RNA sequence: GGGAACGACUCGAGUAGAGUCGAAAAUCUGAAUCCUUCGGGAUUCAGAAAAGGCGGAGGGCCCGCCGGAACCGCUAUACAGGUCGAGGUUCCAAACCACCCAAAGGACUAACUUCGGUUAGUCCAACCACUAACUAAGCUUCGGCUUAGUUAGUGGAAAAGAAACAACAACAACAAC
Reactivity to DMS in 0.01 (KOAc 150mM, MgCl2 10mM, bicine 150mM(pH8.5), 24C), signal-to-noise 1, nucleotides 027 to 126: u000c000u010g000a070a030u000c000c000u010u020c210g030g050g000a010u000u000c010a020g000a000a010a120a170g020g020c010g020g000a110g020g000g000c210c000c010g020c010c000g020g030a000a000c040c020g020c040u030a090u020a100c210a130g000g000u000c100g000a090g000g000u010u000c020c000a050a080a010c080c010a020c010c000c010a090a090a120g000g000a050c020u000a000a010c000u000u040c170g040g020u000u000a020g000u000c000c020a050a020
Reactivity to 2A3 in 0.01 (KOAc 150mM, MgCl2 10mM, bicine 150mM(pH8.5), 24C), signal-to-noise 1, nucleotides 027 to 126: u010c000u010g000a000a000u010c030c000u010u030c120g130g000g000a000u000u000c000a000g000a000a020a010a010g000g000c010g020g000a060g140g000g000c170c000c010g000c030c000g020g000a000a000c020c000g020c060u120a080u060a240c080a100g010g120u140c040g160a090g000g020u000u000c010c000a010a000a000c000c000a000c000c000c010a060a010a000g000g000a000c000u010a030a000c010u040u120c300g060g000u000u000a000g010u040c000c000a000a030
Structure probing data (DMS and 2A3) for a 177-nucleotide construct. Reactivities are rounded to 0.1 and cut off at 0 and 3. It was measured as part of the RMDB library M2PK50. High 2A3 reactivity points to a flexible backbone, as in loops and unpaired stretches.